[RMDB]
Source information
Conditions: 150 mM KOAc, 10 mM MgCl2 and 150 mM bicine (pH 8.5), 24 C. Structure probing data (DMS and 2A3) for a 177-nucleotide construct. DMS adducts were read by reverse transcription with MarathonRT. Values are in units of 0.01, from 0 to 300, in steps of 10. The DMS profile rests on 1,667 reads.
RNA sequence: GGGAACGACUCGAGUAGAGUCGAAAAGGCGACUUCGGCGCCGGAACGCUUGUGUGCCUUGAACUUCGCGCCUAGUCGCGCGGCGAGCAGAUCGGCGACCACGAACCCGAGGUUGUGCCGGGUACGGCGCAGCGGGAGGUUUCGACCUCCCGCUGCGAAAAGAAACAACAACAACAAC
Reactivity to DMS in 0.01 (KOAc 150mM, MgCl2 10mM, bicine 150mM(pH8.5), 24C), signal-to-noise 2, nucleotides 027 to 126: g030g000c030g010a120c080u000u000c090g020g000c010g000c120c040g060g010a070a150c140g010c030u010u000g020u010g010u000g000c080c110u000u010g010a100a180c100u010u010c010g000c030g000c000c000u000a140g030u000c090g020c010g010c030g030g000c050g000a000g000c050a060g000a120u000c050g030g010c000g000a150c130c070a110c050g000a060a190c140c010c010g000a090g000g010u010u000g040u000g000c010c000g010g000g010u010a070c070g000g010
Reactivity to 2A3 in 0.01 (KOAc 150mM, MgCl2 10mM, bicine 150mM(pH8.5), 24C), signal-to-noise 1, nucleotides 027 to 126: g070g010c040g040a090c040u060u020c130g000g000c010g050c000c000g000g010a060a030c030g000c020u060u030g020u080g030u110g100c050c000u090u160g080a160a080c020u090u060c030g040c000g020c000c010u060a080g070u240c020g000c020g050c000g020g000c030g000a060g010c010a000g040a110u070c010g000g030c000g160a190c020c060a090c080g020a030a060c000c030c000g010a050g020g000u050u020g070u080g080c000c010g000g020g010u100a130c060g000g000